[RMDB]
RNA sequence: GGGAACGACUCGAGUAGAGUCGAAAAGAAAUUUUUUAUUUUAUGGAAGGAGGACAUAACCGUCCUACAGUGAAAGUGGGUAAAUAUAUGCCUUGACGCGGUUGGCCGGACGCUGCUUGCAUGGUCGAAUUAGCGUCAGGUUCGCCUGACGCUAAUUAAAAGAAACAACAACAACAAC
Reactivity to 2A3 in 0.01 (KOAc 150mM, MgCl2 10mM, bicine 150mM(pH8.5), 24C), signal-to-noise 2, nucleotides 027 to 126: g010a000a020a020u160u070u010u020u040u020a200u060u290u080u090a040u050g010g010a050a030g000g000a000g000g000a030c070a030u170a090a130c110c070g020u040c000c000u000a030c060a050g030u080g040a140a000a010g050u100g000g050g000u180a040a220a000u050a020u070a060u130g000c000c000u050u010g050a050c060g000c000g070g000u030u000g040g000c000c000g050g000a010c070g000c090u000g010c020u010u090g070c060a050u040g010g070u000c060g000
Reactivity to DMS in 0.01 (KOAc 150mM, MgCl2 10mM, bicine 150mM(pH8.5), 24C), signal-to-noise 2, nucleotides 027 to 126: g010a050a030a000u000u000u000u030u000u000a060u050u000u010u000a030u030g000g010a160a110g000g000a050g020g000a050c040a020u050a110a090c130c050g010u000c030c010u000a010c040a070g040u020g010a060a060a140g000u000g020g010g050u010a010a010a050u040a110u010a040u020g020c000c010u010u000g020a060c080g000c090g000g050u030u000g000g030c000c000g000g000a080c120g000c070u000g000c110u000u010g010c070a040u010g010g000u030c080g020

The record gives the reactivity of an RNA of 177 nucleotides to 2A3 and DMS.
The 2A3 profile rests on 906 reads.
The RNA was probed in 150 mM KOAc, 10 mM MgCl2 and 150 mM bicine (pH 8.5) at 24 C.
DMS adducts were read by reverse transcription with MarathonRT.